[RMDB]
RNA sequence: GGGAACGACUCGAGUAGAGUCGAAAACUCAGGCUCAGGGAAGUAGCAUUAACGAGGAUAUGGCUGCCGAGCUAAAGCUAACCCCGGCAGCAAGGAGGGGCCUGGCAGCUGCUGCCCAACGAGUCUCGGAAUCGAGUAAAUUCGUUUACUCGAUUCCAAAAGAAACAACAACAACAAC
Reactivity to 2A3 in 0.01 (KOAc 150mM, MgCl2 10mM, bicine 150mM(pH8.5), 24C), signal-to-noise 3, nucleotides 027 to 126: c010u010c020a010g000g000c000u000c030a010g020g010g010a040a000g000u010a000g010c030a060u130u160a100a050c100g060a060g040g020a050u050a050u260g080g000c000u010g000c010c000g020a030g030c080u140a210a050a040g040c040u070a140a160c000c000c010c010g000g000c000a010g040c010a010a060g140g030a050g010g060g020g010c010c020u010g070g030c040a020g000c010u010g000c000u020g030c000c000c000a020a040c070g000a000g000u010c000u000c040
Reactivity to DMS in 0.01 (KOAc 150mM, MgCl2 10mM, bicine 150mM(pH8.5), 24C), signal-to-noise 2, nucleotides 027 to 126: c010u000c010a090g010g000c000u000c030a130g010g000g010a040a050g010u000a000g020c020a160u020u000a080a080c050g020a150g000g020a130u010a110u000g010g000c020u000g000c000c000g000a070g000c100u000a010a100a140g010c170u000a070a130c250c000c040c040g000g010c020a020g040c020a070a070g000g000a120g000g010g010g040c020c030u000g020g050c030a070g000c010u000g000c000u000g020c000c000c020a160a100c240g010a040g030u000c010u000c140